This 177-nucleotide RNA was probed chemically with DMS and 2A3.

[RMDB]
RNA sequence: GGGAACGACUCGAGUAGAGUCGAAAAGGAAAGCGCGCGAAUUGGAAACCAGGGCGCCAUAUUACGCGCGCAAGGAAUUGGGCCUUGGUAUUUUGGAAGGAUUAGAUAAUUACCCGGCGCCCGUCAAACAACUAACGAAAUUCGUUUCGUUAGUUGUAAAAGAAACAACAACAACAAC
Reactivity to DMS in 0.01 (KOAc 150mM, MgCl2 10mM, bicine 150mM(pH8.5), 24C), signal-to-noise 5, nucleotides 027 to 126: g000g010a140a140a170g010c010g030c010g020c000g020a070a090u010u000g000g010a080a080a100c100c120a080g000g000g010c120g040c010c010a040u000a030u000u000a110c000g010c020g000c000g020c010a040a030g010g010a090a060u000u000g010g010g010c020c010u000u010g000g000u000a020u000u000u000u000g000g010a160a080g000g000a120u000u010a080g000a110u010a050a040u000u000a070c010c010c050g000g010c070g020c010c000c010g010u000c080a070a090
Reactivity to 2A3 in 0.01 (KOAc 150mM, MgCl2 10mM, bicine 150mM(pH8.5), 24C), signal-to-noise 4, nucleotides 027 to 126: g040g010a150a070a040g010c000g000c020g010c020g020a040a040u100u120g050g080a100a050a080c090c090a210g000g050g020c030g000c010c000a040u110a030u180u110a050c000g010c000g020c000g000c000a000a010g060g020a050a090u170u120g020g020g000c000c030u000u010g030g020u040a040u010u110u070u050g050g040a070a030g030g050a030u100u120a090g030a070u110a100a050u110u060a050c000c000c000g000g000c060g000c040c010c000g000u010c010a040a060

Reactivities are rounded to 0.1 and cut off at 0 and 3. High 2A3 reactivity points to a flexible backbone, as in loops and unpaired stretches. The RNA was probed in 150 mM KOAc, 10 mM MgCl2 and 150 mM bicine (pH 8.5) at 24 C.